[RMDB]
The record gives the reactivity of an RNA of 177 nucleotides to 2A3 and DMS. For DMS, 754 sequencing reads were counted. The reactions ran in a buffer of 150 mM KOAc, 10 mM MgCl2 and 150 mM bicine (pH 8.5), at 24 C.
RNA sequence: GGGAACGACUCGAGUAGAGUCGAAAAGAUAUGGAGAUCAGUAGCUUUUGACGCUCAACCCGUCGGAAACGACGGCAAGAGCGAUAAGCUACAGAUCUCCUAAGUCAAAGCGUACUUCGGUACGCAAGAGCUGAAAAGUGUUCGCACUUUUCAGCUCAAAAGAAACAACAACAACAAC
Reactivity to 2A3 in 0.01 (KOAc 150mM, MgCl2 10mM, bicine 150mM(pH8.5), 24C), signal-to-noise 2, nucleotides 027 to 126: g060a030u160a030u190g000g000a010g010a000u020c030a050g020u010a000g020c010u130u080u140u220g300a200c050g000c000u000c010a020a060c000c010c000g020u030c000g010g030a080a060a080c010g000a000c030g000g000c010a090a060g000a010g010c000g000a000u010a000a010g000c000u000a000c000a000g000a000u030c000u000c000c000u000a060a000g020u010c040a110a070a080g000c000g020u000a010c010u050u100c300g190g000u020a000c040g040c000a000a010
Reactivity to DMS in 0.01 (KOAc 150mM, MgCl2 10mM, bicine 150mM(pH8.5), 24C), signal-to-noise 1, nucleotides 027 to 126: g010a080u000a300u000g010g010a000g010a010u000c000a120g040u000a000g000c000u000u010u000u000g080a300c040g040c000u000c000a020a300c300c010c000g000u000c000g000g000a090a120a300c000g000a030c030g000g000c020a000a300g010a010g000c000g010a090u000a000a030g010c000u000a020c000a000g010a000u000c000u010c000c000u000a010a020g000u000c050a080a020a280g020c000g000u000a020c000u000u000c110g000g010u000a010c000g010c000a010a040